[RMDB]
RNA sequence: GGGAACGACUCGAGUAGAGUCGAAAAAAUUUUGCAAGUUAUAUGUCAGCUAGUAAAUUUUUCAAAGAUUACGCUUUGAAAACAAAUGAUAAAAGUCAAUACUUAGAAGACUAUAAUCAACACGUUGACUACCCUGUUGGUUCGCCAACAGGGUAGUAAAAGAAACAACAACAACAAC
Reactivity to 2A3 in 0.01 (KOAc 150mM, MgCl2 10mM, bicine 150mM(pH8.5), 24C), signal-to-noise 1, nucleotides 027 to 126: a000a000u300u300u040u150g020c030a070a000g000u030u000a090u200a110u300g000u010c000a000g000c000u050a000g030u040a020a300a250u000u000u000u000u000c000a000a050a050g070a160u120u300a110c160g000c160u040u000u000g000a000a000a000a000c000a000a010a010u090g000a000u000a160a110a110a000g070u070c040a000a210u000a220c040u040u100a050g000a300a000g000a090c000u000a000u000a030a000u000c000a050a050c000a000c250g040u080u130g010